This 207-nucleotide RNA was probed chemically with 2A3. Reactivities are rounded to 0.1 and cut off at 0 and 3.
RNA sequence: GGGAACGACUCGAGUAGAGUCGAAAAGAAAGAAAGAAAUUAGCUCGCCAGUUAGCGAGGUCUGUCCCCACACGACAGAUAAUCGGGUGCAACUUCCGCCCCUUUUCCGAGGGUCAUCGGAACCAAAAAAACUCAGGCAACUUCGGUUGCCUGAGAAGUACCUAGAGUUCUUCGGAACUCUAGGUACAAAAGAAACAACAACAACAAC
Reactivity to 2A3 in 0.01 (KOAc 150mM, MgCl2 10mM, bicine 150mM(pH8.5), 24C), signal-to-noise 1, nucleotides 027 to 156: g060a010a120a000g070a060a110a020g020a080a100a060u120u040a160g030c020u020c010g010c020c080a130g130u140u260a010g000c000g000a000g000g000u000c020u010g010u000c000c050c090c000a060c000a000c020g040a000c000a010g020a000u060a060a080u150c030g000g000g040u060g030c040a070a060c010u110u000c020c000g050c010c000c000c000u030u080u130u050c000c000g010a010g000g010g080u110c050a010u020c010g010g010a010a000c030c000a020a100a080a000a000a000a020c000u010c000a000g000g000c010a000a000c000u050u120c220g030g000u020u000g000c000c000u000g000a000g000a000a000